The record gives the reactivity of an RNA of 177 nucleotides to 2A3 and DMS.
For DMS, 19,659 sequencing reads were counted.
For DMS the reverse transcriptase was MarathonRT.
The reactions ran in a buffer of 150 mM KOAc, 10 mM MgCl2 and 150 mM bicine (pH 8.5), at 24 C.
For 2A3 the reverse transcriptase was SuperScript II with manganese.
RNA sequence: GGGAACGACUCGAGUAGAGUCGAAAAGAUCGGCGGCAGCACGACGUUCACGCGGCUGCCGUCCGCGAGCCGCGCGUCGACCAUCGGGCUGCUCUCGUCGACGCGCCGCCCGACCGCCGCCGCGAUACAUUAAAUCCACUUUCGAGUGGAUUUAAUGAAAAGAAACAACAACAACAAC
Reactivity to 2A3 in 0.01 (KOAc 150mM, MgCl2 10mM, bicine 150mM(pH8.5), 24C), signal-to-noise 5, nucleotides 027 to 126: g080a120u120c030g010g010c010g050g000c020a010g040c070a050c280g150a070c030g080u180u250c170a070c180g020c030g020g000c010u050g040c020c000g020u020c010c000g010c010g020a010g010c000c010g000c000g000c000g010u010c010g000a060c030c020a080u100c030g020g030g010c060u070g040c020u010c010u010c060g270u050c040g030a040c010g000c010g000c010c000g000c000c000c000g030a040c020c040g000c000c010g010c010c010g010c020g020a020u040a130
Reactivity to DMS in 0.01 (KOAc 150mM, MgCl2 10mM, bicine 150mM(pH8.5), 24C), signal-to-noise 9, nucleotides 027 to 126: g010a100u010c020g010g010c010g000g020c010a070g010c080a190c030g010a070c070g010u010u010c210a130c070g010c010g000g000c000u000g000c030c060g000u000c040c040g020c050g010a060g010c020c100g000c010g010c010g010u000c010g010a060c070c110a170u010c080g000g000g010c030u000g010c020u000c040u000c170g010u000c070g000a040c080g010c100g010c010c070g010c010c010c020g000a070c110c070g000c020c020g010c020c020g010c050g000a110u000a130